[RMDB]
RNA sequence: GGGAACGACUCGAGUAGAGUCGAAAAUACCAGCUUGUGACAGUAGGGACUGCCAAGUUGCCAGAGAGACUGGAAUGCUUCUCCAUGUAUUGUCCGCAGAAAGCCCGUGUGGACAGGGCCGUACAAUGCUACUAUACCGUUUCGACGGUAUAGUAGCAAAAGAAACAACAACAACAAC
Reactivity to 2A3 in 0.01 (KOAc 150mM, MgCl2 10mM, bicine 150mM(pH8.5), 24C), signal-to-noise 7, nucleotides 027 to 126: u110a030c020c000a000g000c030u070u080g080u130g100a140c020a030g050u120a130g040g080g090a040c020u020g020c020c000a050a030g020u020u050g030c000c010a020g080a000g000a000g030a080c020u030g010g060a060a060u150g050c040u040u040c030u000c030c010a050u090g020u050a060u050u100g030u010c020c010g020c060a040g140a090a080a020g030c000c010c020g120u080g030u080g030g010a030c020a030g000g030g000c000c030g010u030a070c050a060a060u050
Reactivity to DMS in 0.01 (KOAc 150mM, MgCl2 10mM, bicine 150mM(pH8.5), 24C), signal-to-noise 3, nucleotides 027 to 126: u010a160c070c010a080g000c040u000u000g020u020g010a190c040a070g000u000a140g040g000g000a190c010u000g030c000c040a020a150g010u000u010g020c020c020a050g010a140g010a170g020a070c040u000g000g030a090a060u030g000c100u000u000c020u000c020c070a030u010g000u020a060u010u000g010u010c000c020g000c050a110g000a070a100a150g010c000c000c000g000u000g040u000g020g000a030c040a120g000g000g020c010c040g040u000a020c120a060a120u020
The data come from the RNA Mapping Database (RMDB), library OK1LIB. This 177-nucleotide RNA was probed chemically with 2A3 and DMS. Reactivities are rounded to 0.1 and cut off at 0 and 3. For DMS the reverse transcriptase was MarathonRT. High DMS reactivity at an A or C suggests that its Watson-Crick edge is free.